[RMDB]
RNA sequence: GGGAACGACUCGAGUAGAGUCGAAAAAGCCUACGGUCUCCACUGGUCUGGAAGCUCUGGGUCGUGGUCAGGACUUGGAGAAGCUGACUCAGGCGGUUAACAUGAUGACUGGACUUCAGCCUCUGGCCCCUGCUGGGGAAUUCGUUCCCCAGCAGGGAAAAGAAACAACAACAACAAC
Reactivity to DMS in 0.01 (KOAc 150mM, MgCl2 10mM, bicine 150mM(pH8.5), 24C), signal-to-noise 1, nucleotides 027 to 126: a140g010c000c000u000a130c060g010g000u000c000u000c030c010a100c020u000g050g000u000c000u080g060g040a140a060g000c040u000c020u000g000g000g030u010c040g090u040g040g030u000c100a090g040g000a090c050u020u020g010g010a000g000a120a100g000c040u020g000a010c150u020c120a040g000g000c000g000g010u010u010a150a120c150a090u000g000a180u000g000a090c030u000g000g000a070c020u030u030c080a240g000c080c010u020c030u000g000g000c200
Reactivity to 2A3 in 0.01 (KOAc 150mM, MgCl2 10mM, bicine 150mM(pH8.5), 24C), signal-to-noise 4, nucleotides 027 to 126: a000g050c000c000u010a030c030g020g000u000c040u030c040c030a050c080u100g030g020u040c060u030g070g080a100a020g020c020u020c010u000g030g000g010u030c020g070u090g030g060u050c040a020g010g060a050c000u040u050g000g000a060g040a050a030g080c030u050g010a030c010u020c150a020g040g000c040g000g050u050u060a070a020c030a120u230g020a070u140g010a070c030u030g010g030a030c000u060u030c080a020g030c010c000u040c010u040g030g020c000